RNA sequence: GGGAACGACUCGAGUAGAGUCGAAAAAGAGACAGUGGAAACAAAAACCAGAAUUCAAUAGAUAUUUAGGGCCGGGCACAGUGGCUCAUGCCUGUAAUCUCAGCACUUUGGGAACACUAUCAGAAACACUGGUGCCAGAGGAAUGUUAAAAAAGCAAACCUACUCAUAGUUUCGACUAUGAGUAGGUAAAAGAAACAACAACAACAAC
Reactivity to 2A3 in 0.01 (KOAc 150mM, MgCl2 10mM, bicine 150mM(pH8.5), 24C), signal-to-noise 1, nucleotides 027 to 156: a000g120a040g010a020c080a080g040u080g070g050a100a060a040c030a000a050a050a050a040c030c030a000g030a030a030u140u180c120a100a060u140a210g060a030u170a130u160u300u100a030g000g000g010c020c030g010g070g000c030a000c000a080g080u050g110g000c000u040c090a040u040g000c000c000u080g000u120a090a050u060c010u000c010a040g020c090a090c090u120u140u040g000g000g000a090a000c060a000c040u120a080u060c040a000g120a010a140a000c040a010c000u050g070g000u000g020c060c010a050g010a010g040g090a080a000u000g030u020u050a040a090a130a030a000a000g110c130a110a060

The record gives the reactivity of an RNA of 207 nucleotides to 2A3.
Values cover nucleotides 27 to 156.
For 2A3, 439 sequencing reads were counted.
For 2A3 the reverse transcriptase was SuperScript II with manganese.
The RNA was probed in 150 mM KOAc, 10 mM MgCl2 and 150 mM bicine (pH 8.5) at 24 C.